[RMDB]
RNA sequence: GGGAACGACUCGAGUAGAGUCGAAAAUCUACUCCCUUCGGGGAGUAGAAAAUAAACUUGACGAAUGCCGGUCAAGAAAAACGGCAUUCUAAGAUUGCGGAAAAAGGAACUCCUUCGGGAGUUCCAAGGUCUUUAUUAAGUUCGCUUAAUAAAGACCAAAAGAAACAACAACAACAAC
Reactivity to DMS in 0.01 (KOAc 150mM, MgCl2 10mM, bicine 150mM(pH8.5), 24C), signal-to-noise 1, nucleotides 027 to 126: u000c000u010a000c000u000c000c000c000u000u000c180g030g040g000g000a000g000u000a000g000a000a020a100a090u000a090a090a220c030u000u000g030a160c170g000a030a010u000g000c000c000g000g000u020c120a100a110g000a020a080a040a060a100c000g010g000c000a000u000u010c010u000a080a080g000a110u010u000g000c150g010g010a070a070a050a140a090g010g000a010a010c000u000c000c000u000u040c180g020g000g000a020g030u000u000c000c010a010a010
Reactivity to 2A3 in 0.01 (KOAc 150mM, MgCl2 10mM, bicine 150mM(pH8.5), 24C), signal-to-noise 1, nucleotides 027 to 126: u030c000u000a010c000u000c000c000c000u000u020c240g060g000g000g000a000g000u000a000g010a000a000a000a000u040a010a050a030c010u020u080g100a040c070g000a010a000u000g000c020c010g090g120u220c150a130a190g160a200a080a010a010a000c020g000g030c000a010u010u000c000u000a000a000g040a090u110u300g130c120g100g060a070a150a000a000a140g060g000a000a000c000u000c000c000u010u040c120g120g000g000a000g000u000u000c010c010a000a000